The record gives the reactivity of an RNA of 177 nucleotides to DMS and 2A3. For DMS, 996 sequencing reads were counted. Values are in units of 0.01, from 0 to 300, in steps of 10. Conditions: 150 mM KOAc, 10 mM MgCl2 and 150 mM bicine (pH 8.5), 24 C.
[RMDB]
RNA sequence: GGGAACGACUCGAGUAGAGUCGAAAACACGAUGCCGUUGGGCUGCGUCGCACCAUCACCGAUGACGAAAUGCUUGCUGGUGAUACGGCCCAGACGCAUUGCGAGCAGCGAUCGGAUGUACAGCUCGCCAUGGGUACCGCUUCGGCGGUACCCAUGGAAAAGAAACAACAACAACAAC
Reactivity to DMS in 0.01 (KOAc 150mM, MgCl2 10mM, bicine 150mM(pH8.5), 24C), signal-to-noise 1, nucleotides 027 to 126: c130a130c110g000a070u020g010c060c040g030u010u000g000g010g030c000u000g040c110g000u000c020g020c150a140c070c040a020u000c010a060c080c020g000a070u010g010a170c170g000a130a030a080u000g000c090u000u000g030c090u040g000g020u010g010a120u000a070c100g000g010c040c000c020a030g000a050c080g000c020a070u000u000g000c010g010a000g010c000a100g000c040g030a080u000c110g000g000a040u010g020u000a060c130a050g010c020u000c000g020
Reactivity to 2A3 in 0.01 (KOAc 150mM, MgCl2 10mM, bicine 150mM(pH8.5), 24C), signal-to-noise 2, nucleotides 027 to 126: c060a000c070g030a030u070g060c040c040g060u080u050g000g040g000c000u060g010c030g080u050c010g000c010a020c010c020a000u030c010a040c050c090g030a140u170g110a110c120g150a090a060a160u170g030c070u080u080g050c010u030g000g040u010g030a010u000a070c040g060g030c040c000c000a050g060a060c040g000c010a010u020u040g000c010g010a010g030c020a030g060c030g040a050u060c020g090g060a070u130g050u070a090c020a100g020c000u010c010g030